[RMDB]
RNA sequence: GGGAACGACUCGAGUAGAGUCGAAAAGAUAUGGAAGUGGAUUACAGCGAAGAACUCGGAAACGAGGGAGCUGGGUCUUGCUUCCUAAGUCAAAAGACAUCAUUGGUGUUCGCACCAAUGAUGUCAAGUACCAAGUGGUGUUCGCACCACUUGGUACAAAAGAAACAACAACAACAAC
Reactivity to 2A3 in 0.01 (KOAc 150mM, MgCl2 10mM, bicine 150mM(pH8.5), 24C), signal-to-noise 2, nucleotides 027 to 126: g010a030u050a030u130g020g010a010a010g000u010g010g010a010u030u190a300c000a020g000c020g180a300a030g040a100a030c000u000c010g000g010a050a070a060c000g040a020g000g000g030a010g020c000u010g010g010g000u030c030u090u300g040c000u020u000c010c000u010a120a030g030u000c010a000a000a090a200g000a000c000a010u000c000a010u040u010g000g000u010g010u080u120c300g050c090a000c020c020a000a000u010g010a000u020g010u000c000a000a010
Reactivity to DMS in 0.01 (KOAc 150mM, MgCl2 10mM, bicine 150mM(pH8.5), 24C), signal-to-noise 1, nucleotides 027 to 126: g000a020u000a300u010g000g010a000a010g060u000g010g000a040u000u010a100c000a000g040c010g050a080a180g010a080a150c000u000c010g000g000a120a070a160c020g020a000g000g030g000a070g080c010u000g000g000g000u000c010u000u000g000c010u000u010c000c000u000a050a080g010u020c030a100a080a110a090g010a010c010a010u000c000a010u000u010g000g010u010g010u010u030c210g050c010a010c000c000a000a010u000g000a010u000g000u000c010a020a130